[RMDB]
RNA sequence: GGGAACGACUCGAGUAGAGUCGAAAAGAAAAUAAUCUUCAUGAGACGAAAGAAAGACAUUCGAAAUAGGAGAAGCGAGCGUGACCGUUGUGUGUCCUGUACACGUCAUGUAUGAAGAAAUAGAAAAGGGAUUACUAUCUUUCGAGAUAGUAAUCCCAAAAGAAACAACAACAACAAC
Reactivity to 2A3 in 0.01 (KOAc 150mM, MgCl2 10mM, bicine 150mM(pH8.5), 24C), signal-to-noise 5, nucleotides 027 to 126: g160a030a080a010a010u240a030a060u000c010u010u000c000a010u000g030a000g000a080c020g130a220a050a090g090a030a080a000g020a040c020a050u060u050c100g060a040a090a080u160a120g060g110a180g030a130a050g090c070g030a030g010c040g070u070g030a090c010c030g030u060u070g040u020g010u000g020u030c010c010u060g050u080a020c040a010c050g040u020c000a040u260g100u140a020u020g030a010a030g000a000a120a010u130a040g100a020a070a020a000
Reactivity to DMS in 0.01 (KOAc 150mM, MgCl2 10mM, bicine 150mM(pH8.5), 24C), signal-to-noise 3, nucleotides 027 to 126: g040a070a050a100a080u030a090a100u010c000u000u010c000a030u000g010a070g010a080c000g040a100a050a070g020a130a110a040g000a050c090a070u000u000c050g000a040a100a060u040a150g000g020a050g000a080a110g010c040g030a040g010c020g020u000g010a110c020c010g000u000u020g010u020g010u000g000u000c020c020u010g000u010a080c300a100c030g000u000c020a080u030g010u010a020u000g000a000a040g010a040a040a090u030a070g000a070a030a120a110